[RMDB]
RNA sequence: GGGAACGACUCGAGUAGAGUCGAAAAGUGAAGAAGGUAAACGCAAGUACGGCGCUCGUGAGAUCAACAAGACACGGGACUUCAUUGCGCAGUUCGCACGUCUUAUUCCCAAAAGUAAGGGUGCUUAUCGCACUGCUACGGGAAUCACAAGCGGUACUCAGCAGUUACUAUUCGUAGUAACUGCUGAAAAAGAAACAACAACAACAAC
Reactivity to 2A3 in 0.01 (KOAc 150mM, MgCl2 10mM, bicine 150mM(pH8.5), 24C), signal-to-noise 4, nucleotides 027 to 156: g130u110g060a030a050g020a040a070g110g010u130a100a070a030c060g000c060a040a030g010u020a010c040g010g110c020g110c030u020c040g010u020g010a100g010a100u150c060a040a120c050a080a020g020a030c010a020c090g000g000g010a000c000u050u020c100a100u090u300g020c090g000c030a010g030u050u050c050g010c070a030c050g010u000c010u000u020a070u010u030c000c010c000a050a110a020a000g040u100a040a070g080g050g020u030g010c040u130u150a150u230c080g000c000a000c000u050g030c000u020a010c060g000g000g030a000a040u040c010a030c000a010a000g010c010g020g000u000a010c030
Reactivity to DMS in 0.01 (KOAc 150mM, MgCl2 10mM, bicine 150mM(pH8.5), 24C), signal-to-noise 2, nucleotides 027 to 156: g010u000g030a050a040g010a120a100g030g030u010a010a070a100c110g030c050a060a060g050u000a100c030g020g050c000g000c040u000c050g000u040g020a080g010a150u010c000a140a110c090a040a130g020a100c030a070c110g020g000g000a060c100u000u000c090a220u000u040g020c180g030c130a150g010u000u000c010g040c040a060c050g000u010c020u000u000a110u000u010c000c010c080a060a110a090a120g020u000a070a060g000g040g030u000g020c050u000u000a120u000c180g000c000a040c000u000g010c010u000a050c180g010g030g020a080a100u000c040a020c010a050a030g010c030g030g030u020a060c070

Background:
Chemical mapping of a 207-nucleotide RNA with 2A3 and DMS. It was measured as part of the RMDB library OK3TST. For 2A3, 2,595 sequencing reads were counted. Values cover nucleotides 27 to 156. The DMS profile rests on 3,123 reads. As a SHAPE reagent, 2A3 marks flexible, mostly unpaired nucleotides at the ribose 2'-OH. 2A3 adducts were read by reverse transcription with SuperScript II with manganese.